[RMDB]
RNA sequence: GGGAACGACUCGAGUAGAGUCGAAAAGGGCGUCAUUUCGAUGACGCCCAUACGUCUACUCCGAAUGGCGAGGACGACGCCGACGGGCGCGUUUGCCAAUCGCACCGUCCAGAUUCGUCUGGACGAAUCUGAAAGCAAAAUUCGUUUUGCUUUCAGAAAAAGAAACAACAACAACAAC
Reactivity to DMS in 0.01 (KOAc 150mM, MgCl2 10mM, bicine 150mM(pH8.5), 24C), signal-to-noise 8, nucleotides 027 to 126: g000g000g010c000g010u000c000a020u000u000u010c190g010a020u000g010a010c000g010c000c000c000a000u000a010c250g000u000c000u000a020c010u000c010c030g000a040a080u000g000g000c010g010a110g010g000a040c010g000a120c010g030c010c010g010a140c300g010g010g010c030g020c010g000u000u000u000g000c000c000a030a040u000c010g000c120a130c200c020g010u000c000c010a010g000a040u000u010c160g010u000c000u000g000g000a010c000g010a020a030
Reactivity to 2A3 in 0.01 (KOAc 150mM, MgCl2 10mM, bicine 150mM(pH8.5), 24C), signal-to-noise 9, nucleotides 027 to 126: g000g000g000c010g010u000c010a010u030u080u150c220g080a010u010g000a000c000g010c010c000c000a000u010a000c000g030u000c000u010a010c010u000c010c020g010a050a030u030g000g000c030g050a090g100g050a060c020g090a190c010g020c010c010g210a300c180g070g010g000c000g000c010g000u000u010u090g010c010c000a010a030u020c010g000c040a070c060c010g000u000c000c000a000g010a010u030u070c130g050u000c080u000g000g000a000c010g010a000a080